RNA sequence: GGGAACGACUCGAGUAGAGUCGAAAACAACACGUCUUCGGACGUGUUGAAACGUGGUGCGUACGAUAAGGCAUAUAAAGCCCAAGACAAGCAGGGCAAAAAAAACAACCAGCUUCGGCUGGUUGAAGAUAUACCAGAAGUUCGCUUCUGGUAUAUCAAAAGAAACAACAACAACAAC
Reactivity to 2A3 in 0.01 (KOAc 150mM, MgCl2 10mM, bicine 150mM(pH8.5), 24C), signal-to-noise 3, nucleotides 027 to 126: c000a000a000c010a000c000g010u030c010u040u050c180g120g010a000c000g010u000g000u000u000g010a010a010a000c010g020u050g020g030u040g040c050g090u060a040c010g010a070u020a080a030g130g000c050a010u150a000u050a120a090a020g010c000c020c010a050a040g100a090c050a050a050g040c060a100g020g000g000c000a040a060a020a020a000a000a000a020c010a000a000c010c000a010g010c000u060u060c140g180g020c000u010g000g000u000u000g010a000a000
Reactivity to DMS in 0.01 (KOAc 150mM, MgCl2 10mM, bicine 150mM(pH8.5), 24C), signal-to-noise 4, nucleotides 027 to 126: c010a010a010c000a010c000g010u000c000u000u010c220g010g000a020c000g030u000g010u000u010g010a050a060a150c100g010u000g010g020u010g010c020g010u000a050c030g020a070u010a050a070g000g000c030a020u000a110u000a080a120a130g020c000c010c010a080a100g020a280c160a070a100g010c120a100g000g000g010c040a010a000a000a050a040a040a050a110c000a000a000c000c000a000g010c000u000u010c230g020g020c000u000g000g010u000u000g000a010a040